An RNA of 207 nucleotides, treated with 2A3 and DMS and read out base by base.
Reactivities are given for positions 27 through 156.
2A3 adducts were read by reverse transcription with SuperScript II with manganese.
[RMDB]
RNA sequence: GGGAACGACUCGAGUAGAGUCGAAAAACCAAGCACGGCAUCACACAUUGUGUGUGAUGAGUGUGGCUGAGUUAAUGCACUCGGGUAAGGUAACAACCCCCAUGUCAAGAGGACCGACCUGCAGCCAAGCCUUUGGUUAUACCAAGGGUGCUGUUCAUCAAAGAUCUUGGUUCGCCAAGAUCUUUGAAAAAGAAACAACAACAACAAC
Reactivity to 2A3 in 0.01 (KOAc 150mM, MgCl2 10mM, bicine 150mM(pH8.5), 24C), signal-to-noise 2, nucleotides 027 to 156: a020c020c000a040a010g020c000a010c040g270g000c070a000u000c000a020c000a000c000a120u300u300g090u160g000u020g000u000g300a000u010g000a010g000u030g020u040g050g000c030u010g000a010g040u060u070a080a060u150g040c060a020c050u080c000g000g000g040u110a160a030g030g030u110a190a110c090a150a220c030c000c070c030c020a030u140g090u120c080a060a040g020a080g080g060a020c000c010g050a040c010c010u020g010c000a000g010c040c010a080a070g000c020c010u030u000u030g080g030u100u190a090u190a190c000c000a000a000g000g000g020u050g020c030u000g000u040u060c030a030
Reactivity to DMS in 0.01 (KOAc 150mM, MgCl2 10mM, bicine 150mM(pH8.5), 24C), signal-to-noise 1, nucleotides 027 to 156: a130c020c010a060a250g060c010a030c000g010g000c020a000u000c000a010c030a000c010a300u000u010g110u020g050u000g040u010g000a010u000g000a040g030u010g000u000g030g030c020u000g020a090g020u000u000a050a090u000g040c110a070c040u000c000g020g000g000u000a090a080g000g010u000a100a110c060a090a220c040c010c000c020c020a070u010g020u000c050a070a130g010a050g000g010a060c010c030g010a080c030c050u020g030c030a080g000c030c040a070a160g000c000c000u000u000u000g010g010u000u000a170u000a190c040c000a020a040g020g000g040u000g050c010u000g010u000u020c010a070